Overview: The data come from the RNA Mapping Database (RMDB), library OK3TST. An RNA of 207 nucleotides, treated with DMS and 2A3 and read out base by base.
[RMDB]
RNA sequence: GGGAACGACUCGAGUAGAGUCGAAAAGGAGGAAGGAUGUCGAAACCGAGAGGUCCUGAGGAAUCGCUUUUUAGAGUUUGACUAACAGAUUGUGUUAGUGUUUAGAACCUCCCUAAACAACUCUUCAGAAACCUCAGGCGACAGUGAGGGAGGUAGACGAACUACAAUAAUUCGUUAUUGUAGUUCGAAAAGAAACAACAACAACAAC
Reactivity to DMS in 0.01 (KOAc 150mM, MgCl2 10mM, bicine 150mM(pH8.5), 24C), signal-to-noise 5, nucleotides 027 to 156: g010g010a050g030g010a060a060g000g020a100u000g010u010c030g010a090a070a090c030c040g000a160g020a080g010g010u000c020c020u010g000a050g030g000a040a250u000c030g010c170u000u010u000u000u000a040g010a050g030u000u000u020g020a110c010u000a000a030c010a080g020a240u000u020g020u000g010u000u000a010g020u010g000u000u000u000a050g000a060a100c060c030u000c020c020c010u000a040a030a030c030a060a040c010u000c010u000u010c110a140g010a040a040a260c010c000u000c010a030g010g010c110g010a060c030a060g020u010g000a060g010g010g010a020g020g030u000a030g000a180
Reactivity to 2A3 in 0.01 (KOAc 150mM, MgCl2 10mM, bicine 150mM(pH8.5), 24C), signal-to-noise 8, nucleotides 027 to 156: g030g010a000g010g020a030a020g030g030a050u060g040u110c040g050a120a050a060c050c020g020a030g000a020g050g020u050c000c000u000g000a000g010g010a010a040u040c040g040c100u150u120u040u090u150a000g010a000g000u040u090u250g130a020c000u000a020a000c020a140g160a300u250u220g110u010g000u080u000a010g000u010g010u030u020u000a010g000a030a020c000c010u030c000c000c000u010a010a010a010c010a000a000c010u010c000u050u060c070a060g030a030a030a010c000c000u000c000a000g000g000c010g000a000c000a010g060u040g080a030g000g000g010a010g010g000u020a030g030a040